[RMDB]
RNA sequence: GGGAACGACUCGAGUAGAGUCGAAAAGAUCUGAGUCUUCAACUUGAUCAUGUUGGGGACCCUUGUCAAGGGUGAAUUAUUUUGAGGGGGCCAUUUACUCAAAACUACACUUGAUCCUGGGGCUGACCAUAGGAGUAAACUUCGGUUUACUCCUAUGAAAAGAAACAACAACAACAAC
Reactivity to DMS in 0.01 (KOAc 150mM, MgCl2 10mM, bicine 150mM(pH8.5), 24C), signal-to-noise 6, nucleotides 027 to 126: g000a060u010c090u010g010a070g010u000c010u010u000c020a020a020c020u010u000g010a090u010c190a040u000g010u000u010g000g000g000g000a020c010c020c010u000u010g000u000c110a070a090g000g000g010u000g010a110a090u010u000a120u010u000u000u010g010a040g010g000g010g010g010c180c070a050u000u010u000a060c020u000c020a010a020a040a050c140u010a090c050a050c040u000u000g000a060u010c010c030u000g010g000g000g010c140u000g010a120c130
Reactivity to 2A3 in 0.01 (KOAc 150mM, MgCl2 10mM, bicine 150mM(pH8.5), 24C), signal-to-noise 2, nucleotides 027 to 126: g030a050u070c070u120g040a030g040u010c010u060u010c020a010a000c010u110u150g040a100u280c070a090u120g020u030u000g000g000g020g020a000c010c000c010u050u040g080u070c050a030a040g000g020g010u030g030a080a090u250u090a090u070u150u070u040g030a030g010g050g020g030g020c000c020a050u110u080u060a050c040u030c000a020a030a010a040c030u080a030c050a010c020u030u090g010a010u050c000c010u020g000g000g040g000c020u020g020a050c020